[RMDB]
RNA sequence: GGGAACGACUCGAGUAGAGUCGAAAAAAGAUAUGGAAUACCCUAGUACGACGAACUACGUUCGGGCUUUGUCGGAAACGACAAAGUCUCUAGCGUGACGCGUCGGAACGGGUAUUCCUAAGUCAAACUCACUUACUAUCUUCGGAUAGUAAGUGAGAAAAGAAACAACAACAACAAC
Reactivity to DMS in 0.01 (KOAc 150mM, MgCl2 10mM, bicine 150mM(pH8.5), 24C), signal-to-noise 4, nucleotides 027 to 126: a130a070g000a030u010a300u010g000g000a020a010u000a010c000c000c000u010a060g000u010a210c010g000a020c000g010a100a140c090u000a020c010g000u000u000c300g010g010g000c010u000u000u000g020u000c000g010g000a080a090a190c000g000a020c000a000a010a000g010u010c000u010c060u000a030g000c010g010u000g010a090c300g000c010g000u010c000g000g000a130a120c240g000g000g020u000a000u000u000c000c000u000a020a070g010u000c050a090a070a180
Reactivity to 2A3 in 0.01 (KOAc 150mM, MgCl2 10mM, bicine 150mM(pH8.5), 24C), signal-to-noise 1, nucleotides 027 to 126: a000a000g140a040u140a060u190g000g000a000a020u000a010c000c020c000u010a000g010u000a000c010g020a000c030g030a140a030c040u030a000c080g000u010u020c030g000g000g000c000u020u000u000g010u000c000g010g070a120a100a030c010g020a020c000a000a000a010g010u010c010u000c000u040a000g000c000g000u000g020a040c140g000c010g060u010c000g000g000a000a010c000g030g040g010u000a000u000u000c000c000u000a010a000g000u000c000a010a020a130